[RMDB]
RNA sequence: GGGAACGACUCGAGUAGAGUCGAAAACCAAGGGCUGUGGCUGCUUGUAGCCAAGGGAUCUUCAAAUGCAUGCCAGAGUAAUGGAGAGACUUUGACAGUGCAGGUCAGCACAAAGCCUGCAGCUACCGAUAUUUGAAUCAUUCGUGAUUCAAAUAUCAAAAGAAACAACAACAACAAC
Reactivity to DMS in 0.01 (KOAc 150mM, MgCl2 10mM, bicine 150mM(pH8.5), 24C), signal-to-noise 9, nucleotides 027 to 126: c010c010a140a120g010g000g010c010u010g020u020g000g010c010u000g000c020u000u000g000u000a080g010c030c000a010a020g000g000g010a150u000c000u000u000c010a030a090a120u020g000c030a080u020g010c140c140a070g010a110g010u010a070a160u010g000g000a020g000a030g000a150c000u000u000u000g010a040c040a130g020u010g010c000a010g000g010u020c030a050g000c020a050c050a050a080a050g010c000c000u000g000c180a070g000c100u000a080c220c130
Reactivity to 2A3 in 0.01 (KOAc 150mM, MgCl2 10mM, bicine 150mM(pH8.5), 24C), signal-to-noise 9, nucleotides 027 to 126: c000c000a060a090g030g000g000c010u030g030u080g100g020c000u000g000c000u010u010g030u040a040g110c020c000a000a010g020g000g010a020u000c000u010u010c020a060a100a140u190g020c030a030u160g100c040c050a090g040a020g120u060a080a050u040g000g000a010g000a000g000a010c020u020u020u010g080a140c050a060g060u010g030c000a000g010g050u270c050a010g000c020a020c020a090a110a010g010c000c010u020g020c030a040g010c010u100a090c030c080
Source information:
The record gives the reactivity of an RNA of 177 nucleotides to DMS and 2A3. The reactions ran in a buffer of 150 mM KOAc, 10 mM MgCl2 and 150 mM bicine (pH 8.5), at 24 C.